[RMDB]
RNA sequence: GGGAACGACUCGAGUAGAGUCGAAAAGAUAUGGAGCUGAGGGAGCUCCUUAUCGGAAACGAUAAUGAGCGACGAUCUAGCUCCUAAGUCAAAGGCUUAUCCGUGACUUCGGUCACGGAUAAGCCAAGAUUAUCCCGACGUUCGCGUCGGGAUAAUCAAAAGAAACAACAACAACAAC
Reactivity to DMS in 0.01 (KOAc 150mM, MgCl2 10mM, bicine 150mM(pH8.5), 24C), signal-to-noise 1, nucleotides 027 to 126: g010a010u000a300u000g000g000a000g010c000u000g020a040g000g000g010a160g020c000u010c000c050u010u000a000u000c010g010g010a040a060a100c000g010a010u020a000a020u000g000a020g000c010g000a210c230g010a140u020c000u010a080g000c020u000c000c010u000a010a100g030u000c040a090a200a140g000g000c000u000u000a010u000c000c000g010u000g000a020c020u000u000c210g040g000u000c000a000c000g020g000a000u010a000a000g000c000c000a000a000